[RMDB]
RNA sequence: GGGAACGACUCGAGUAGAGUCGAAAAGAUAUGGACGUUUCUGGAGGAGCAGAGGGUCGGAAACGACCCGAUCUCCGAUGAAAGAGAACGUCCUAAGUCAAAACGUUAGGAGUUCGCUCCUAACGAAGUAUCAGAUGGGCUUCGGCCCAUCUGAUACAAAAGAAACAACAACAACAAC
Reactivity to DMS in 0.01 (KOAc 150mM, MgCl2 10mM, bicine 150mM(pH8.5), 24C), signal-to-noise 1, nucleotides 027 to 126: g000a030u000a300u000g000g000a010c020g010u030u000u000c030u000g000g000a040g020g020a040g000c240a030g100a300g000g010g030u000c020g000g010a050a060a160c000g000a030c000c000c000g000a070u010c000u020c000c000g010a040u010g000a080a110a000g000a030g010a000a030c000g010u000c000c000u000a000a030g040u010c020a040a150a210a190c030g030u000u000a000g000g010a020g000u000u030c300g010c020u000c000c000u020a000a000c000g000a050a090

Source: RMDB library TTRDEL, as collected in RNAgym. An RNA of 177 nucleotides, treated with DMS and read out base by base. Reactivities are given for positions 27 through 126. The DMS profile rests on 685 reads.